[RMDB]
RNA sequence: GGGAACGACUCGAGUAGAGUCGAAAAGCCUUACGAUUCGUCGUAAGGCAUAGAAAGUUUUGGCACUAUGAGCCCGCAGCGUUGGUGCUCCCACGCGGUGCAAUACGACGGAUUUCGAUCCGUCGAACACUGAUGCGGAGUUCGCUCCGCAUCAGUGAAAAGAAACAACAACAACAAC
Reactivity to 2A3 in 0.01 (KOAc 150mM, MgCl2 10mM, bicine 150mM(pH8.5), 24C), signal-to-noise 1, nucleotides 027 to 126: g000c000c000u000u020a000c020g000a020u010u060c170g070u010c000g000u110a010a000g000g010c020a000u040a020g030a000a140a030g030u070u070u160u120g040g000c000a030c070u040a070u270g090a060g040c000c000c010g030c030a090g000c010g060u130u180g030g000u130g090c050u130c020c000c000a040c050g000c030g010g010u030g000c020a040a010u120a090c010g000a000c000g030g050a020u030u000u120c150g020a010u000c000c000g000u000c000g000a010a000
Reactivity to DMS in 0.01 (KOAc 150mM, MgCl2 10mM, bicine 150mM(pH8.5), 24C), signal-to-noise 1, nucleotides 027 to 126: g010c000c000u000u000a000c010g000a010u010u010c180g090u010c000g000u000a010a000g030g020c010a000u000a020g020a140a090a080g000u010u000u030u000g000g000c030a070c070u010a120u000g000a090g000c040c010c030g000c120a150g000c070g000u000u020g010g000u000g010c190u030c080c040c000a040c020g000c050g010g000u000g000c090a100a110u020a100c050g000a000c000g020g030a010u000u010u020c160g010a030u000c000c000g020u000c000g010a010a100
The record gives the reactivity of an RNA of 177 nucleotides to 2A3 and DMS. 2A3 adducts were read by reverse transcription with SuperScript II with manganese. The 2A3 profile rests on 1,489 reads. Reactivities are given for positions 27 through 126. The RNA was probed in 150 mM KOAc, 10 mM MgCl2 and 150 mM bicine (pH 8.5) at 24 C. The data come from the RNA Mapping Database (RMDB), library M2PK50.